Chemical mapping of a 177-nucleotide RNA with 2A3 and DMS.
As a SHAPE reagent, 2A3 marks flexible, mostly unpaired nucleotides at the ribose 2'-OH.
It was measured as part of the RMDB library TTRDES.
DMS adducts were read by reverse transcription with MarathonRT.
The reactions ran in a buffer of 150 mM KOAc, 10 mM MgCl2 and 150 mM bicine (pH 8.5), at 24 C.

[RMDB]
RNA sequence: GGGAACGACUCGAGUAGAGUCGAAAAGAUAUGGAGACAGAGAGACAUGAGCGAUGUCGGAAACGACAUCAGCUCAACAGCUCUUCUGUCUCCUAAGUCAAAAGCUUAGACGUUCGCGUCUAAGCAACUUACAAAAAUGGUUCGCCAUUUUUGUAAGAAAAGAAACAACAACAACAAC
Reactivity to 2A3 in 0.01 (KOAc 150mM, MgCl2 10mM, bicine 150mM(pH8.5), 24C), signal-to-noise 4, nucleotides 027 to 126: g010a000u020a010u080g000g000a010g000a000c010a000g030a000g010a010g010a060c120a300u250g000a020g000c000g000a000u000g000u010c000g020g000a020a020a000c000g000a000c000a000u010c020a010g000c000u020c010a040a030c030a040g010c020u000c000u090u030c000u000g000u000c000u010c000c000u000a000a000g000u010c010a040a040a050a130g000c000u010u010a000g000a020c000g080u040u110c300g050c010g110u030c000u000a010a000g020c000a000a000
Reactivity to DMS in 0.01 (KOAc 150mM, MgCl2 10mM, bicine 150mM(pH8.5), 24C), signal-to-noise 5, nucleotides 027 to 126: g000a020u000a190u010g010g000a020g000a010c000a010g000a020g010a040g010a060c100a170u010g000a030g010c000g000a010u000g020u000c000g020g000a060a030a080c000g020a020c010a000u000c000a060g020c000u000c000a030a050c230a180g010c010u000c010u000u020c010u010g010u000c000u000c000c000u000a000a040g010u010c010a150a100a140a140g000c010u000u000a000g010a020c000g020u000u010c300g030c010g020u010c000u000a010a000g010c000a020a020